Description:
An RNA of 177 nucleotides, treated with DMS and 2A3 and read out base by base. For DMS the reverse transcriptase was MarathonRT. For DMS, 2,329 sequencing reads were counted. Reactivities are given for positions 27 through 126.
RNA sequence: GGGAACGACUCGAGUAGAGUCGAAAAAGAAACUUCACCGUCGACCGAGAUGGCCUGGAAUACAUAUGGGGCAAUCACGAACCAGUAAGGGUCUAUGCCCAAGAGUCUGCACCAGGAGACCCUCACGCGAUUUAGCACUAUUCGUAGUGCUAAAUCGAAAAGAAACAACAACAACAAC
Reactivity to DMS in 0.01 (KOAc 150mM, MgCl2 10mM, bicine 150mM(pH8.5), 24C), signal-to-noise 3, nucleotides 027 to 126: a070g020a090a090a060c080u010u020c050a060c010c020g010u000c010g000a180c090c030g010a120g030a080u010g010g010c010c000u000g010g000a120a050u010a080c130a070u010a120u010g010g020g000g040c030a060a070u000c090a100c120g020a060a120c080c070a130g010u020a060a050g000g000g000u000c020u000a120u000g000c000c000c020a070a080g010a110g000u000c090u000g000c180a060c050c030a050g000g000a070g020a080c020c010c000u010c110a050c180g020
Reactivity to 2A3 in 0.01 (KOAc 150mM, MgCl2 10mM, bicine 150mM(pH8.5), 24C), signal-to-noise 2, nucleotides 027 to 126: a000g070a010a060a010c030u060u040c020a050c040c020g030u050c020g030a110c050c010g010a030g020a220u060g070g000c030c000u000g030g000a060a060u120a170c030a030u190a130u240g010g010g010g000c020a020a040u090c040a020c160g070a070a040c010c020a030g050u070a040a110g040g000g000u000c030u040a070u140g000c000c000c020a000a020g080a000g070u020c030u070g000c050a040c020c010a010g030g020a020g040a030c000c060c010u000c010a020c000g060